Description
This 207-nucleotide RNA was probed chemically with DMS and 2A3. The reactions ran in a buffer of 150 mM KOAc, 10 mM MgCl2 and 150 mM bicine (pH 8.5), at 24 C. The data come from the RNA Mapping Database (RMDB), library OK3TST.
RNA sequence: GGGAACGACUCGAGUAGAGUCGAAAAUCAAAGCAUAAUAGUUGUGACUUGUCGGAACUCAUUGAGUCUUAUUUUGACAACCCUUCUAUAUUGCAAAGUGUAGCAUCUGCGUAUGCUAAUCUACCUUCAUGGGUGGCAUACGAACAAGCACGUGAUGCAACUUGUGUGAGUUCGCUCACACAAGUUGAAAAGAAACAACAACAACAAC
Reactivity to DMS in 0.01 (KOAc 150mM, MgCl2 10mM, bicine 150mM(pH8.5), 24C), signal-to-noise 1, nucleotides 027 to 156: u010c030a070a200a270g090c020a010u000a140a070u000a040g040u020u000g040u000g030a040c040u000u010g010u010c010g000g020a040a050c030u000c030a180u010u010g010a130g020u000c060u020u000a240u000u000u030u030g030a030c010a030a070c030c010c010u010u000c010u010a090u000a170u000u000g010c020a020a060a240g000u000g030u000a070g010c090a090u000c040u040g000c050g020u000a000u000g000c000u000a050a020u000c030u000a140c070c030u000u000c100a100u020g010g030g020u000g000g050c000a020u000a010c020g000a020a020c050a120a210g010c040a050c050g000u000g000a060u000g040
Reactivity to 2A3 in 0.01 (KOAc 150mM, MgCl2 10mM, bicine 150mM(pH8.5), 24C), signal-to-noise 3, nucleotides 027 to 156: u110c030a030a000a030g040c030a000u090a120a020u010a150g020u010u010g060u140g110a070c020u010u000g000u010c010g060g050a070a010c020u030c040a280u140u300g000a040g020u040c070u080u250a230u080u190u030u100g000a000c000a000a010c020c020c000u000u000c000u000a020u020a040u000u090g000c020a160a050a080g060u110g080u120a070g030c030a060u040c060u130g000c020g000u020a000u010g000c000u030a090a120u010c030u070a060c030c010u140u260c180a190u300g010g020g000u000g000g030c000a000u000a010c020g010a020a050c030a120a000g030c030a030c070g050u080g030a010u090g010
DMS (dimethyl sulfate) methylates the pairing face of unpaired adenines and cytosines.